[RMDB]
RNA sequence: GGGAACGACUCGAGUAGAGUCGAAAAGUUAGGCGAGGCUCCUAUACAAACACAGGUUGCUGAUCUGACGACGUCGAGAGACGCCCAAGAUUAGGACAGGACAUAUCGAACCAAGGUAUAUCCCCAUAAAACUCGGAACACUUCGGUGUUCCGAGAACAUUCCCCAUUUGUUCGCAAAUGGGGAAUGAAAAGAAACAACAACAACAAC
Reactivity to 2A3 in 0.01 (KOAc 150mM, MgCl2 10mM, bicine 150mM(pH8.5), 24C), signal-to-noise 2, nucleotides 027 to 156: g040u030u020a030g040g010c050g030a040g060g000c060u060c030c010u090a070u090a200c180a060a200a000c100a020c040a120g140g040u150u210g130c010u020g010a020u000c020u050g010a010c010g010a010c010g000u000c010g010a030g010a010g000a100c000g020c000c010c000a030a020g030a040u040u050a010g020g040a030c030a040g000g040a010c000a040u140a030u050c030g040a020a060c020c020a030a020g000g030u040a090u010a040u150c000c010c000c000a020u210a080a100a030a050c010u000c000g000g000a000a010c010a000c000u030u110c240g060g000u000g000u010u000c000c000g010a000g000a000a000
Reactivity to DMS in 0.01 (KOAc 150mM, MgCl2 10mM, bicine 150mM(pH8.5), 24C), signal-to-noise 2, nucleotides 027 to 156: g010u010u000a010g080g020c040g010a210g010g010c040u000c040c020u010a110u010a150c100a080a100a130c100a070c080a060g030g020u000u000g020c000u000g020a040u020c010u000g010a130c000g000a010c000g010u000c010g000a300g010a300g000a030c000g020c000c000c050a150a050g010a030u000u000a040g000g000a100c060a100g000g000a080c010a050u000a020u000c010g000a020a300c080c060a140a140g010g020u000a040u000a050u000c000c000c020c030a070u000a030a070a050a150c010u010c010g000g000a040a020c000a000c030u010u000c300g040g040u000g030u000u000c010c010g000a010g010a030a070